This 177-nucleotide RNA was probed chemically with DMS and 2A3. It was measured as part of the RMDB library OK2TRN. Conditions: 150 mM KOAc, 10 mM MgCl2 and 150 mM bicine (pH 8.5), 24 C. DMS adducts were read by reverse transcription with MarathonRT. The 2A3 profile rests on 1,586 reads.
RNA sequence: GGGAACGACUCGAGUAGAGUCGAAAAACGCCUUGUUGAUGAAGCGGAUCCUGUCCGCGGCAUCGAGGACGAUCACCGGAUCCGGCAUGGCGUCGAAGAUGAGCUCCCUCGCCGCAGGAAGCACGUCCGAUGGGUGAUGGUUCGCCAUCACCCAUCGAAAAGAAACAACAACAACAAC
Reactivity to DMS in 0.01 (KOAc 150mM, MgCl2 10mM, bicine 150mM(pH8.5), 24C), signal-to-noise 2, nucleotides 027 to 126: a060c000g030c000c000u000u000g030u030u010g020a080u010g020a150a110g020c060g010g000a020u000c060c140u000g010u000c010c030g020c000g000g010c080a080u020c060g020a130g030g020a040c060g000a100u000c100a120c180c120g000g010a040u000c030c020g000g010c010a030u010g000g010c020g010u000c050g020a100a070g010a090u000g000a100g000c010u000c020c030c000u000c090g030c070c070g050c100a090g010g000a040a020g020c020a020c030g020u010c000
Reactivity to 2A3 in 0.01 (KOAc 150mM, MgCl2 10mM, bicine 150mM(pH8.5), 24C), signal-to-noise 2, nucleotides 027 to 126: a000c020g000c020c000u030u060g100u020u150g140a270u140g060a030a000g050c010g010g000a020u040c020c090u170g020u070c030c030g010c000g040g000c030a040u170c130g070a120g040g050a020c060g010a090u190c070a030c200c080g110g010a070u000c000c020g080g000c030a020u020g010g010c000g020u020c010g060a030a040g020a040u100g020a040g010c010u010c020c070c000u020c050g220c050c020g000c000a000g000g020a040a020g050c020a020c060g000u000c040